[RMDB]
Chemical mapping of a 177-nucleotide RNA with 2A3 and DMS.
It was measured as part of the RMDB library M2PK90.
DMS (dimethyl sulfate) methylates the pairing face of unpaired adenines and cytosines.
For 2A3, 1,355 sequencing reads were counted.
For 2A3 the reverse transcriptase was SuperScript II with manganese.
The reactions ran in a buffer of 150 mM KOAc, 10 mM MgCl2 and 150 mM bicine (pH 8.5), at 24 C.
Reactivities are given for positions 27 through 126.
Reactivities are rounded to 0.1 and cut off at 0 and 3.

RNA sequence: GGGAACGACUCGAGUAGAGUCGAAAAAAUUUGAGCGUCGCACACACACAGACUAAGUCUGCUGCUGACAGAGCCUAAACCGCUCUGUCAGUGUGCGAGAUAUCGUUCUUAAUGUGAGCACAAGAAAUGAGCGUGUAAUAUUCGUAUUACACGCUCAAAAAGAAACAACAACAACAAC
Reactivity to 2A3 in 0.01 (KOAc 150mM, MgCl2 10mM, bicine 150mM(pH8.5), 24C), signal-to-noise 1, nucleotides 027 to 126: a010a020u150u100u080g070a100g030c050g030u050c050g010c030a030c010a010c000a000c000a000c000a040g040a030c030u140a290a000g050u000c000u000g040c020u020g010c010u020g040a000c000a000g000a000g000c000c010u020a080a080a040c000c000g000c000u010c000u010g030u000c000a000g000u000g000u000g000c030g030a000g000a000u050a020u080c020g070u130u000c030u030u100a110a080u040g030u040g030a060g100c030a040c020a110a030g050a080a140a100
Reactivity to DMS in 0.01 (KOAc 150mM, MgCl2 10mM, bicine 150mM(pH8.5), 24C), signal-to-noise 4, nucleotides 027 to 126: a040a110u000u000u000g010a040g000c040g020u000c060g030c010a040c000a040c130a190c120a080c170a020g000a020c030u000a110a190g010u000c010u000g000c060u000g030c110u010g010a010c000a000g010a000g010c010c010u000a090a090a130c300c300g010c000u000c000u000g000u000c000a000g020u010g000u010g010c000g000a040g020a070u000a180u010c060g000u000u000c010u000u010a110a080u000g010u010g000a080g020c050a060c080a070a080g010a040a040a090